RNA sequence: GGGAACGACUCGAGUAGAGUCGAAAAGAUAUGGACGGAUAGACGGGUUUAGUUGGAGCAACAGCUAUGUGUCGGAAACGACAUGAAUAGACAUGCUCCAACUAAACCCGUCGUCCGUCCUAAGUCAUCUACAACUAAAGUUCGCUUUAGUUGUAGAAAAAGAAACAACAACAACAAC
Reactivity to DMS in 0.01 (KOAc 150mM, MgCl2 10mM, bicine 150mM(pH8.5), 24C), signal-to-noise 6, nucleotides 027 to 126: g010a050u000a300u010g010g000a030c000g010g000a030u000a070g050a010c010g010g010g010u000u010u000a010g000u000u000g010g000a010g010c010a040a100c290a240g010c010u000a010u000g010u000g010u000c000g010g000a130a100a280c000g010a010c000a010u000g000a100a040u000a000g000a040c110a260u000g000c000u000c000c000a000a000c000u000a000a010a000c000c000c000g000u000c010g000u000c000c000g000u000c000c000u010a000a040g010u000c030a180